[RMDB]
RNA sequence: GGGAACGACUCGAGUAGAGUCGAAAAAGGCCGUAACGGGCGUUGAGCGCAUCCCAUAGCUGAGCUUCAUAGGUUCGAAGGUCUUGCAGAGAUUUCUGGUGACUGAGCAUCGCCAUGUCGACGGCCCCACAGAGGAGGUAUUCGUACCUCCUCUGUGAAAAGAAACAACAACAACAAC
Reactivity to 2A3 in 0.01 (KOAc 150mM, MgCl2 10mM, bicine 150mM(pH8.5), 24C), signal-to-noise 2, nucleotides 027 to 126: a000g010g000c010c000g020u010a020a030c020g000g020g000c030g010u020u080g060a070g010c070g000c050a060u070c000c020c010a040u140a030g000c040u060g030a020g000c000u060u020c060a120u130a240g180g000u100u090c040g060a070a010g020g070u020c010u070u180g040c040a030g020a100g060a300u090u300u030c060u070g040g020u060g030a040c070u040g000a020g030c010a020u010c000g010c010c010a110u100g010u010c050g030a010c000g010g020c010c010c010
Reactivity to DMS in 0.01 (KOAc 150mM, MgCl2 10mM, bicine 150mM(pH8.5), 24C), signal-to-noise 4, nucleotides 027 to 126: a100g000g010c000c010g010u000a270a040c050g010g010g000c000g010u010u000g010a090g010c030g000c110a100u000c020c030c050a150u010a120g000c080u010g000a020g000c020u000u010c250a100u000a130g020g020u000u010c050g010a140a190g010g000u000c030u000u000g010c070a080g010a100g000a150u010u010u000c050u010g000g010u000g010a040c070u000g000a130g010c030a080u000c020g020c010c010a050u000g000u000c090g000a040c010g010g010c000c000c100